[RMDB]
RNA sequence: GGGAACGACUCGAGUAGAGUCGAAAAAGCGAUCCAGCGCGUACGGCCGUGAUCCUGAUCGUACCGGCGCACGUACGAGUACGAUCGAGUGGAUCGGCGCUGUGAUCUCGGCCUGUGGAUCCAUAGGGAUCCGAGGUCAGUUCGCUGACCUCGGAUCAAAAGAAACAACAACAACAAC
Reactivity to DMS in 0.01 (KOAc 150mM, MgCl2 10mM, bicine 150mM(pH8.5), 24C), signal-to-noise 2, nucleotides 027 to 126: a130g020c120g000a010u000c010c010a030g000c020g040c030g020u010a110c220g000g020c080c090g040u000g000a060u000c010c000u000g010a000u000c010g020u010a010c020c010g020g010c020g000c240a100c170g010u010a030c010g020a160g010u000a020c000g000a000u000c010g000a090g010u020g000g000a010u000c000g020g010c000g010c000u000g000u010g010a010u010c020u000c060g010g030c010c010u010g010u020g010g000a070u000c020c010a150u010a130g010g000
Reactivity to 2A3 in 0.01 (KOAc 150mM, MgCl2 10mM, bicine 150mM(pH8.5), 24C), signal-to-noise 2, nucleotides 027 to 126: a010g040c020g000a000u050c000c010a020g000c020g020c010g070u080a060c110g090g010c080c020g070u080g010a010u010c010c030u010g000a010u020c000g020u020a030c000c000g010g000c030g060c070a170c140g090u250a060c000g000a060g030u010a000c020g000a020u030c020g020a120g140u180g000g040a060u020c000g000g030c000g010c010u080g050u250g050a020u000c010u010c030g060g020c020c000u090g020u100g060g010a050u000c030c040a050u140a150g120g040